[RMDB]
RNA sequence: GGGAACGACUCGAGUAGAGUCGAAAAGGCUUCACCUUCGGGUGAAGCCAAAUAAGCCAGAUCGCCGGAUAGCUGCCUAAGCGAGAUCGCCGGAUAGCUGCCAAAGGAUUCCGUUCGCGGAAUCCAAGUAAUUAGUCCAGUUCGCUGGACUAAUUACAAAAGAAACAACAACAACAAC
Reactivity to 2A3 in 0.01 (KOAc 150mM, MgCl2 10mM, bicine 150mM(pH8.5), 24C), signal-to-noise 2, nucleotides 027 to 126: g000g000c010u020u000c000a000c000c010u070u080c210g040g010g010u010g000a000a000g010c000c000a020a010a000u000a000a000g050c000c010a010g030a170u110c070g020c090c050g080g000a080u060a070g020c000u010g020c020c050u090a070a030g040c020g010a070g100a200u190c060g010c010c000g000g010a010u050a040g030c010u020g010c030c000a110a140a120g000g010a010u000u000c020c000g030u040u070c260g030c010g100g010a000a000u010c000c000a000a010
Reactivity to DMS in 0.01 (KOAc 150mM, MgCl2 10mM, bicine 150mM(pH8.5), 24C), signal-to-noise 2, nucleotides 027 to 126: g000g010c000u020u020c000a000c000c000u010u000c230g010g020g020u000g010a020a000g010c000c010a000a010a040u010a090a200g020c050c040a090g000a060u010c110g000c060c070g000g010a090u000a110g010c010u010g020c020c060u000a080a080g000c000g020a210g000a070u000c050g040c000c040g000g030a050u000a090g020c030u000g020c030c080a110a110a140g030g010a010u000u000c010c000g000u000u000c170g040c000g000g000a030a000u000c010c010a040a090

About this RNA
Structure probing data (2A3 and DMS) for a 177-nucleotide construct. Values cover nucleotides 27 to 126. The RNA was probed in 150 mM KOAc, 10 mM MgCl2 and 150 mM bicine (pH 8.5) at 24 C. DMS adducts were read by reverse transcription with MarathonRT.